[RMDB]
RNA sequence: GGGAACGACUCGAGUAGAGUCGAAAAGGUGACGGGUACUCUUAUAGAGUGGAACGAACUAACGACUUGAAUGGUGUGUUCAUUGUUGAAAUGACUCUCAGCAUGACCGAUGGGAUCACGAUGAACCACAUGAGGCCUUUGUCCGACAUCUCAUGUGCCCGAUAAGGGCUUUCGAGCCCUUAUCGGGAAAAGAAACAACAACAACAAC
Reactivity to 2A3 in 0.01 (KOAc 150mM, MgCl2 10mM, bicine 150mM(pH8.5), 24C), signal-to-noise 1, nucleotides 027 to 156: g030g010u040g000a060c190g030g000g070u230a190c050u000c000u030u290a160u110a160g010a000g040u040g070g100a060a010c040g000a060a000c060u130a170a050c070g110a070c070u000u040g150a030a080u090g080g000u050g050u000g010u010u000c000a020u000u040g060u080u140g060a090a130a090u110g040a030c000u000c000u010c030a080g010c050a070u260g230a210c080c000g060a040u100g000g020g000a040u080c010a000c060g000a000u080g000a010a010c000c000a000c000a090u060g000a040g000g000c000c000u130u050u210g080u040c050c050g100a050c000a130u080c000u000c000a000u130g010u010g120
An RNA of 207 nucleotides, treated with 2A3 and read out base by base. For 2A3 the reverse transcriptase was SuperScript II with manganese. Conditions: 150 mM KOAc, 10 mM MgCl2 and 150 mM bicine (pH 8.5), 24 C. The 2A3 profile rests on 414 reads.